Source information: Structure probing data (2A3 and DMS) for a 177-nucleotide construct. Values cover nucleotides 27 to 126. The 2A3 profile rests on 84,407 reads. For DMS, 83,599 sequencing reads were counted.
[RMDB]
RNA sequence: GGGAACGACUCGAGUAGAGUCGAAAACGUCGUGAACUAGCGACAAUGCUCUAGGUCCAUCGUUAUCUAACCGAAACAUCGUGACUAGUCGUAGAAUAGAACCAGGAGAGGACGCUGGCAAACAAAGACGUAGUGUCUGAUUCGUCGGACGCUACGUAAAAGAAACAACAACAACAAC
Reactivity to 2A3 in 0.01 (KOAc 150mM, MgCl2 10mM, bicine 150mM(pH8.5), 24C), signal-to-noise 9, nucleotides 027 to 126: c040g010u010c010g020u040g070a110a060c050u030a060g010c010g020a010c010a030a080u160g020c010u010c020u060a070g060g040u010c030c020a070u050c080g050u040u050a110u070c040u040a030a070c030c010g020a040a020a020c030a060u080c040g050u050g040a040c020u030a030g040u040c050g030u040a020g040a100a040u080a050g030a030a010c020c010a020g020g030a070g010a020g020g020a000c010g000c030u010g010g000c010a020a040a020c040a020a090a010g110
Reactivity to DMS in 0.01 (KOAc 150mM, MgCl2 10mM, bicine 150mM(pH8.5), 24C), signal-to-noise 9, nucleotides 027 to 126: c130g010u010c040g020u020g010a140a120c120u020a090g010c030g010a050c040a100a080u030g000c030u000c020u010a090g010g000u000c020c030a090u010c080g010u010u010a080u010c050u010a080a110c070c040g000a080a080a090c140a080u020c050g010u010g010a080c040u010a050g000u010c060g010u000a060g000a060a080u020a080g000a060a080c060c040a140g000g000a070g000a100g000g000a030c040g010c020u000g000g010c080a050a070a060c130a060a090a100g010